The record gives the reactivity of an RNA of 177 nucleotides to 2A3 and DMS. The reactions ran in a buffer of 150 mM KOAc, 10 mM MgCl2 and 150 mM bicine (pH 8.5), at 24 C. For 2A3, 862 sequencing reads were counted.
RNA sequence: GGGAACGACUCGAGUAGAGUCGAAAAGAGCUUGACUCUAGUUUGACAUUGUGAAAAGACAUAGAGGGUGUAGCAUAAGUGGGAGCGAAAGCGCCAGUGAAAUACCACUACCUUUAUCGUCUUUUUAUUUAAAGAGGCGAUUCGUCGCCUCUUUAAAAAAAGAAACAACAACAACAAC
Reactivity to 2A3 in 0.01 (KOAc 150mM, MgCl2 10mM, bicine 150mM(pH8.5), 24C), signal-to-noise 1, nucleotides 027 to 126: g010a020g050c070u180u150g030a300c000u010c010u000a050g030u080u050u100g100a080c140a110u070u070g040u000g080a000a000a000a000g000a000c000a020u000a000g010a000g030g030g030u140g030u040a040g020c180a000u010a020a000g010u010g000g000g010a180g000c000g020a060a020a030g010c000g000c000c000a000g000u010g000a030a000a000u010a010c000c000a000c000u030a020c000c000u010u030u030a000u000c060g000u010c000u000u000u000u010u010a030
Reactivity to DMS in 0.01 (KOAc 150mM, MgCl2 10mM, bicine 150mM(pH8.5), 24C), signal-to-noise 5, nucleotides 027 to 126: g010a000g000c040u010u010g000a120c010u000c000u010a070g000u000u000u010g020a160c300a210u020u000g000u010g000a000a010a010a000g010a010c010a000u000a010g010a000g010g000g020u010g000u000a010g010c160a020u000a020a020g000u000g000g010g010a030g020c000g000a110a090a130g010c010g030c240c300a130g000u000g000a010a000a050u000a040c010c010a010c000u000a020c000c000u010u000u000a010u000c150g000u000c000u000u000u000u000u000a060